Record summary
Structure probing data (DMS) for a 177-nucleotide construct. For DMS the reverse transcriptase was MarathonRT.

RNA sequence: GGGAACGACUCGAGUAGAGUCGAAAAGAUAUGGAAUCUCCACGACAUGUUGAUUUGAGAGAGCUGACGACUCGGAAACGAGUUACAGCUCUCUCAAAUCAACAACAGCGUGGGAGAUUCCUAAGUCCAUGGAUUGUAUCUUCGGAUACAAUCCAUGAAAAGAAACAACAACAACAAC
Reactivity to DMS in 0.01 (KOAc 150mM, MgCl2 10mM, bicine 150mM(pH8.5), 24C), signal-to-noise 1, nucleotides 027 to 126: g000a100u010a300u020g000g010a000a010u000c000u000c000c000a030c000g000a060c160a190u000g000u000u010g000a000u000u000u010g000a040g020a000g000a020g010c000u000g000a070c170g000a000c000u000c000g010g020a110a080a230c000g010a010g000u000u000a100c000a010g020c000u000c010u000c000u000c010a010a000a030u000c000a020a010c000a020a130c300a170g020c040g000u010g010g000g010a010g000a000u000u000c000c000u000a020a110g000u000c040